Chemical mapping of a 177-nucleotide RNA with DMS.
[RMDB]
RNA sequence: GGGAACGACUCGAGUAGAGUCGAAAAGUGAUGUAGAGGAAAUGCGACAACGGAUUCUCGAAUCCUUCGAACGACAUGUCCGAUACGUGUCCCCUUACAAAGACAUGCCCCUCCGAUUUGCAAACCAUCAGCCCCUAGUAUUCGUACUAGGGGCUGAAAAAGAAACAACAACAACAAC
Reactivity to DMS in 0.01 (KOAc 150mM, MgCl2 10mM, bicine 150mM(pH8.5), 24C), signal-to-noise 1, nucleotides 027 to 126: g030u000g000a080u000g000u010a110g020a300g000g030a010a040a060u000g060c040g000a140c110a070a090c300g000g000a080u010u000c070u020c290g010a020a040u000c000c000u000u000c300g000a070a030c040g030a090c020a000u000g000u000c040c000g000a260u010a080c010g000u000g000u000c000c010c000c170u000u020a100c030a170a150a030g000a080c060a080u000g000c010c040c030c000u000c010c040g000a120u000u030u000g020c070a030a050a100c190c110a050
It was measured as part of the RMDB library OK2TST. For DMS, 486 sequencing reads were counted. The RNA was probed in 150 mM KOAc, 10 mM MgCl2 and 150 mM bicine (pH 8.5) at 24 C. Reactivities are rounded to 0.1 and cut off at 0 and 3.